The record gives the reactivity of an RNA of 177 nucleotides to DMS and 2A3. High DMS reactivity at an A or C suggests that its Watson-Crick edge is free. For DMS the reverse transcriptase was MarathonRT. It was measured as part of the RMDB library M2PK50.
RNA sequence: GGGAACGACUCGAGUAGAGUCGAAAAGCGGAGAUGUUCGCAUCUCCGCAAAUCGCUGGAUGCAGCGAGUUAAAACGGAUACGUUGGCAAGUAUCCAUCGCAAAAGUAUUAGCUUCGGCUAAUACAACAUAGUAGUAGGGUUCGCCCUACUACUAUGAAAAGAAACAACAACAACAAC
Reactivity to DMS in 0.01 (KOAc 150mM, MgCl2 10mM, bicine 150mM(pH8.5), 24C), signal-to-noise 9, nucleotides 027 to 126: g010c000g010g010a010g020a010u000g010u000u010c220g030c010a010u000c000u000c000c000g020c000a010a030a050u000c000g020c000u000g000g010a190u010g020c010a020g010c000g010a020g010u010u020a060a050a110a110c190g000g000a030u000a010c010g010u010u010g020g010c200a110a150g000u000a000u000c000c010a090u000c160g000c180a070a080a090a110g000u000a000u000u000a000g010c000u000u010c200g030g000c000u000a000a000u000a000c000a100a160
Reactivity to 2A3 in 0.01 (KOAc 150mM, MgCl2 10mM, bicine 150mM(pH8.5), 24C), signal-to-noise 9, nucleotides 027 to 126: g010c000g010g010a010g000a000u010g010u080u160c220g010c100a000u010c010u000c010c000g000c000a010a010a000u010c000g000c000u020g020g050a160u300g230c010a000g000c000g000a010g000u070u210a090a130a030a040c090g000g000a000u010a010c030g050u130u150g220g020c090a100a030g000u000a010u000c010c000a020u090c080g060c070a070a070a030a080g000u000a000u010u010a000g000c000u030u030c230g050g000c000u000a000a000u000a010c000a010a010